Source: RMDB library OK1LIB, as collected in RNAgym. Structure probing data (2A3) for a 177-nucleotide construct.
RNA sequence: GGGAACGACUCGAGUAGAGUCGAAAACAAUCAUUAGUACUGCACAUACCAAAGCUUACAAUGUUGCUAUUGAAGCAGCUAUUCCUACUGGUAAGACUUCUGAUAUGUUAAUUGCACUUGCAAACGCGACUAGCCGACGUUUCGACGUCGGCUAGUCAAAAGAAACAACAACAACAAC
Reactivity to 2A3 in 0.01 (KOAc 150mM, MgCl2 10mM, bicine 150mM(pH8.5), 24C), signal-to-noise 2, nucleotides 027 to 126: c000a000a000u090c180a040u110u170a010g160u120a090c020u110g000c020a000c070a000u040a000c000c000a010a010a010g000c050u000u000a100c120a180a130u080g080u070u000g000c000u100a040u270u300g080a170a000g000c020a000g000c000u030a140u060u080c000c000u100a160c000u090g110g000u000a000a000g020a200c000u000u000c000u060g020a090u050a030u080g020u050u060a220a040u190u030g000c010a050c230u160u110g020c060a120a060a000c100g000c060